The record gives the reactivity of an RNA of 177 nucleotides to 2A3 and DMS.
For 2A3, 3,702 sequencing reads were counted.
RNA sequence: GGGAACGACUCGAGUAGAGUCGAAAACACAAGGUCGUUGACUGUGGAAUAGCUCUCAUGUCCAGCCGAACCCCACAGCUGAGUAUGUGUCAUUCCUAGCGGCUGGCACACCGCCUCGUCGAGAUACCGUUAGCUAGGGAUUCGUCCCUAGCUAACGAAAAGAAACAACAACAACAAC
Reactivity to 2A3 in 0.01 (KOAc 150mM, MgCl2 10mM, bicine 150mM(pH8.5), 24C), signal-to-noise 4, nucleotides 027 to 126: c050a010c020a050a040g200g070u110c070g140u180u130g090a120c020u030g010u020g060g030a060a080u060a130g020c030u010c020u030c120a040u110g090u000c010c020a010g010c010c000g050a120a130c040c050c010c000a030c020a010g030c030u090g040a030g120u180a070u140g060u010g010u000c040a090u000u060c010c000u020a060g060c040g060g000c010u000g000g040c000a000c000a000c000c030g060c050c020u070c030g080u070c030g050a030g010a130u070a120c040
Reactivity to DMS in 0.01 (KOAc 150mM, MgCl2 10mM, bicine 150mM(pH8.5), 24C), signal-to-noise 4, nucleotides 027 to 126: c040a050c070a090a130g020g020u000c050g000u010u010g020a110c000u000g020u010g010g000a130a080u000a120g020c090u000c040u000c090a090u000g000u000c040c030a020g010c010c030g000a110a200c120c060c000c020a020c050a030g000c040u010g000a070g030u000a070u000g010u000g000u000c060a120u010u010c010c010u010a080g030c040g000g010c090u010g000g000c040a060c090a080c060c020g000c030c030u000c060g010u010c050g010a110g010a090u000a080c170
Reactivities are given for positions 27 through 126. Conditions: 150 mM KOAc, 10 mM MgCl2 and 150 mM bicine (pH 8.5), 24 C.